[RMDB]
RNA sequence: GGGAACGACUCGAGUAGAGUCGAAAAGCAAGUUGACUGGCACCAUGAGCAACUGAAGGAACUCCUCAAAAAUGACAUAAAGGAAAUACUGAAGGAGCAAUUGGCUACAGAGCAUGCAAGGAUGAGGAAACUCCUUAGAAAGGAUGCGAAGAAAAUAGGAAAAUAAAUUAUUCGUAAUUUAUUUUCCAAAAGAAACAACAACAACAAC
Reactivity to DMS in 0.01 (KOAc 150mM, MgCl2 10mM, bicine 150mM(pH8.5), 24C), signal-to-noise 2, nucleotides 027 to 156: g000c020a080a170g000u000u000g000a110c000u000g000g030c040a120c020c040a110u000g010a300g030c040a100a240c050u010g000a170a050g000g020a100a130c040u000c010c030u020c030a040a020a050a120a110u000g000a060c070a180u000a090a110a140g000g000a070a020a090u000a110c060u010g030a090a030g010g010a290g020c040a010a190u000u000g030g010c040u000a050c050a100g030a120g000c040a070u000g020c040a070a030g000g020a030u030g000a110g000g000a050a070a060c040u000c030c020u010u010a160g010a030a110a100g000g020a090u000g010c040g000a020a130g030a130a040a050a060u010a260
Reactivity to 2A3 in 0.01 (KOAc 150mM, MgCl2 10mM, bicine 150mM(pH8.5), 24C), signal-to-noise 2, nucleotides 027 to 156: g040c020a020a010g010u010u040g090a080c040u040g050g050c030a040c020c000a020u040g020a010g040c020a010a040c000u020g020a030a030g020g020a000a050c010u030c000c010u040c030a010a090a130a050a040u130g020a070c030a100u280a050a130a010g050g030a060a010a020u150a110c050u040g040a040a030g030g000a010g000c000a010a050u070u050g000g000c000u020a020c020a020g060a020g010c010a010u090g020c010a020a030g070g000a060u050g010a050g050g000a010a000a080c040u010c020c000u030u010a050g040a090a090a000g020g010a020u030g060c030g090a030a020g040a050a130a020a110u300a040